[RMDB]
An RNA of 177 nucleotides, treated with DMS and read out base by base. In probing experiments dimethyl sulfate is read out at A N1 and C N3, which are open when not base-paired. The RNA was probed in 150 mM KOAc, 10 mM MgCl2 and 150 mM bicine (pH 8.5) at 24 C. For DMS the reverse transcriptase was MarathonRT. Reactivities are given for positions 27 through 126. It was measured as part of the RMDB library OK2TRN.
RNA sequence: GGGAACGACUCGAGUAGAGUCGAAAAACGAUGGCUUGGUGGAUGGGUACCGCUCGUGCCGGAGCUACGGCCCGCAGGUAGUCGACCGCCUCGGAGAUCUUCAUCCAUGGGGCCGCGGCGGGAGUGGGUAAAUAUCCCGGUUCGCCGGGAUAUUUACAAAAGAAACAACAACAACAAC
Reactivity to DMS in 0.01 (KOAc 150mM, MgCl2 10mM, bicine 150mM(pH8.5), 24C), signal-to-noise 1, nucleotides 027 to 126: a100c090g000a080u010g010g030c060u000u000g020g010u010g000g010a060u000g010g030g010u000a140c050c070g000c030u010c050g000u000g030c030c030g010g020a150g010c110u010a200c080g020g020c020c010c020g010c130a040g010g010u010a130g020u010c050g000a090c030c010g020c050c030u010c130g000g010a090g000a080u000c040u010u010c060a180u000c010c050a060u010g000g000g020g000c010c000g040c100g000g010c040g000g000g000a060g010u000g010g010